RNA sequence: GGGAACGACUCGAGUAGAGUCGAAAAUUGGCGCUGCCCGUGGCGUCGGCGGCGUGCAGCGCGGGGUGGAGCAUCUGCGCCAGGUCGGCAAGCUCCUCGCGAAGAUGACUGGCGUUGUCGACGAAGACGACCUACCCGUAUUCGUACGGGUAGGUCGAAAAGAAACAACAACAACAAC
Reactivity to DMS in 0.01 (KOAc 150mM, MgCl2 10mM, bicine 150mM(pH8.5), 24C), signal-to-noise 2, nucleotides 027 to 126: u010u000g000g000c010g000c020u000g000c020c020c020g060u010g010g010c040g040u000c020g000g040c010g010g000c020g030u000g020c000a020g020c000g030c000g020g000g020g020u010g030g000a070g000c050a080u020c100u010g000c010g000c000c030a070g030g020u010c110g020g000c110a070a160g010c030u000c010c030u010c030g010c040g000a090a100g000a110u000g000a230c000u000g000g010c020g000u000u000g010u000c000g000a070c020g010a110a120g010a220
Reactivity to 2A3 in 0.01 (KOAc 150mM, MgCl2 10mM, bicine 150mM(pH8.5), 24C), signal-to-noise 1, nucleotides 027 to 126: u100u110g040g010c000g010c020u000g030c040c030c040g000u040g160g030c040g010u040c000g020g000c000g010g000c000g000u110g150c000a000g060c030g000c050g040g040g030g010u150g030g080a080g010c040a090u110c070u120g010c030g000c010c010a030g000g150u090c030g040g060c050a020a080g000c000u000c020c020u020c000g000c020g070a070a060g120a110u290g020a030c000u010g000g000c020g040u040u040g000u000c000g000a020c020g000a030a000g070a050
The record gives the reactivity of an RNA of 177 nucleotides to DMS and 2A3. For 2A3 the reverse transcriptase was SuperScript II with manganese. The reactions ran in a buffer of 150 mM KOAc, 10 mM MgCl2 and 150 mM bicine (pH 8.5), at 24 C. For 2A3, 1,780 sequencing reads were counted. Values cover nucleotides 27 to 126. Source: RMDB library OK2TRN, as collected in RNAgym.